[RMDB]
Notes
An RNA of 177 nucleotides, treated with DMS and read out base by base. The DMS profile rests on 1,260 reads. Values cover nucleotides 27 to 126. Source: RMDB library TTRINS, as collected in RNAgym. The reactions ran in a buffer of 150 mM KOAc, 10 mM MgCl2 and 150 mM bicine (pH 8.5), at 24 C.
RNA sequence: GGGAACGACUCGAGUAGAGUCGAAAAGAUAUGGACCGGAAGGGAUAUCCUUAGACAUGCGGUACGUGAGGGUCGGAAACGACCCUCUUCGCAACAGCUAAGGAUAUCCCUUCACGGUCCUAAGUCAUCGGAGAAUGAAGUUCGCUUCAUUCUCCGAAAAAGAAACAACAACAACAAC
Reactivity to DMS in 0.01 (KOAc 150mM, MgCl2 10mM, bicine 150mM(pH8.5), 24C), signal-to-noise 1, nucleotides 027 to 126: g010a030u000a300u000g010g000a010c000c000g010g010a030a010g010g000g000a000u000a000u000c010c000u000u000a030g010a060c130a230u000g000c020g000g010u030a090c300g010u000g000a010g000g000g000u000c030g000g000a130a110a280c050g000a010c000c000c000u010c000u000u000c000g010c030a030a110c260a150g000c000u000a000a010g000g010a000u000a010u000c010c000c000u000u010c000a020c000g020g000u000c000c000u000a000a040g010u010c040a200